[RMDB]
RNA sequence: GGGAACGACUCGAGUAGAGUCGAAAACGGUGUGGCCUGCCCCCCUGUAGAGGGGUGUCGUAGGCUACCCGUUGAAGCGAGGGAAACCGGGUCAGGCCGGAAACGGAACAGCCCAUCCUGCGCACGUCCGCCGUUGCAGAAUCACGCCGCGGAGCAUCCUACAUAAAACGUUCGCGUUUUAUGUAGGAAAAGAAACAACAACAACAAC
Reactivity to DMS in 0.01 (KOAc 150mM, MgCl2 10mM, bicine 150mM(pH8.5), 24C), signal-to-noise 1, nucleotides 027 to 156: c000g000g030u020g040u000g030g020c000c000u010g000c000c030c000c000c000c010u060g070u010a100g020a070g010g000g000g020u000g010u020c040g000u010a020g000g020c020u000a000c010c000c000g020u010u010g020a070a080g020c000g020a110g000g000g020a060a090a140c020c000g000g070g010u020c130a290g050g000c010c060g010g000a040a110a140c000g010g000a150a070c050a150g020c020c010c050a300u000c040c010u000g020c040g000c020a120c110g020u000c020c030g000c030c020g020u010u000g000c030a180g020a170a300u020c050a090c110g060c060c060g040c050g000g000a090g000c130a140u020
Reactivity to 2A3 in 0.01 (KOAc 150mM, MgCl2 10mM, bicine 150mM(pH8.5), 24C), signal-to-noise 4, nucleotides 027 to 156: c000g020g030u140g010u010g060g000c000c010u000g000c000c000c000c000c000c000u090g090u180a190g080a050g170g020g000g000u060g030u060c050g000u030a000g000g000c000u000a000c000c000c000g000u010u010g020a040a000g010c000g020a070g000g020g000a150a130a060c110c150g010g030g000u080c060a080g040g060c000c000g010g030a010a020a000c010g000g020a060a040c020a020g010c000c000c000a010u020c000c010u030g040c010g000c030a030c040g070u010c010c000g000c010c010g030u030u040g030c030a040g100a230a120u130c030a050c180g030c020c020g010c010g010g000a000g050c010a040u020
Notes:
This 207-nucleotide RNA was probed chemically with DMS and 2A3. The DMS profile rests on 1,698 reads. For 2A3 the reverse transcriptase was SuperScript II with manganese. For 2A3, 3,180 sequencing reads were counted. The data come from the RNA Mapping Database (RMDB), library ARCHII. Conditions: 150 mM KOAc, 10 mM MgCl2 and 150 mM bicine (pH 8.5), 24 C.